[RMDB]
RNA sequence: GGGAACGACUCGAGUAGAGUCGAAAAUUAAAAUGUGCGUCCCUCCCGAAGCUGCGCGCUCGGUCGAAGAGGAGGACCACAGCCGAUAGAGGACUGACGGUCUUCGGUCAAGGGAAAAAGAAAAAAACGAAGGAAUUAGGUUCGCCUAAUUCCUUCGAAAAGAAACAACAACAACAAC
Reactivity to 2A3 in 0.01 (KOAc 150mM, MgCl2 10mM, bicine 150mM(pH8.5), 24C), signal-to-noise 2, nucleotides 027 to 126: u090u040a020a110a050a100u100g000u030g040c060g020u010c020c020c000u020c000c000c000g050a060a020g000c040u080g030c180g050c020g010c180u040c030g110g000u050c130g080a130a050g050a070g040g000a030g000g010a020c010c000a000c010a000g030c000c010g080a080u120a140g120a060g040g020a080c030u050g080a030c100g080g000u000c000u000u010c020g010g010u060c010a060a070g080g020g000a020a060a030a060a030g110a080a030a000a000a000a000a000
Reactivity to DMS in 0.01 (KOAc 150mM, MgCl2 10mM, bicine 150mM(pH8.5), 24C), signal-to-noise 2, nucleotides 027 to 126: u000u030a040a020a050a090u000g030u000g000c150g010u000c070c010c030u000c040c000c010g010a120a100g020c060u000g020c110g000c120g010c080u010c040g010g000u000c040g010a080a080g020a110g000g000a060g000g000a030c010c000a090c020a020g000c030c040g000a120u010a080g010a070g020g020a040c010u000g000a080c180g010g010u000c020u000u000c010g000g000u010c040a070a110g000g010g000a030a040a040a030a110g040a030a010a050a040a080a040a140
Structure probing data (2A3 and DMS) for a 177-nucleotide construct. Values cover nucleotides 27 to 126. For DMS the reverse transcriptase was MarathonRT. The reactions ran in a buffer of 150 mM KOAc, 10 mM MgCl2 and 150 mM bicine (pH 8.5), at 24 C. Source: RMDB library M2PK90, as collected in RNAgym.